Conditions: 150 mM KOAc, 10 mM MgCl2 and 150 mM bicine (pH 8.5), 24 C. This 177-nucleotide RNA was probed chemically with 2A3 and DMS. The 2A3 profile rests on 1,495 reads. DMS adducts were read by reverse transcription with MarathonRT.
RNA sequence: GGGAACGACUCGAGUAGAGUCGAAAAAAGACCUGACUGUUUUUAAAAGCGAAUGCCAGUGAGUGAAAUGCCAGCUCCCUGUACAGUUACUAGAGCUCCUGGGAAUGCAUGGCCAGUGACACAAGUGCGCGAGGAUAAAAUUCGUUUUAUCCUCGCGAAAAGAAACAACAACAACAAC
Reactivity to 2A3 in 0.01 (KOAc 150mM, MgCl2 10mM, bicine 150mM(pH8.5), 24C), signal-to-noise 3, nucleotides 027 to 126: a010a000g080a010c010c000u000g050a040c010u010g150u030u040u010u030u140a130a180a010a000g050c030g050a070a010u050g040c030c040a000g000u030g090a030g000u040g060a140a120a080u160g060c050c010a020g010c030u020c040c000c020u000g050u080a040c010a040g040u080u100a080c060u100a130g010a030g090c010u010c000c000u020g010g020g000a060a020u120g000c040a080u010g040g000c050c010a030g040u050g050a000c010a000c010a040a120g070u090g070
Reactivity to DMS in 0.01 (KOAc 150mM, MgCl2 10mM, bicine 150mM(pH8.5), 24C), signal-to-noise 2, nucleotides 027 to 126: a050a050g000a120c040c030u000g000a060c060u000g000u040u010u000u000u000a040a090a070a080g000c060g010a170a070u000g000c050c030a040g000u020g000a120g000u010g020a100a050a050u010g010c050c010a060g020c080u010c030c030c000u000g000u000a130c090a070g000u000u000a060c130u040a080g030a170g010c070u010c040c010u010g000g000g020a080a090u050g000c050a050u010g010g000c020c000a060g010u000g020a090c070a020c110a100a090g000u030g000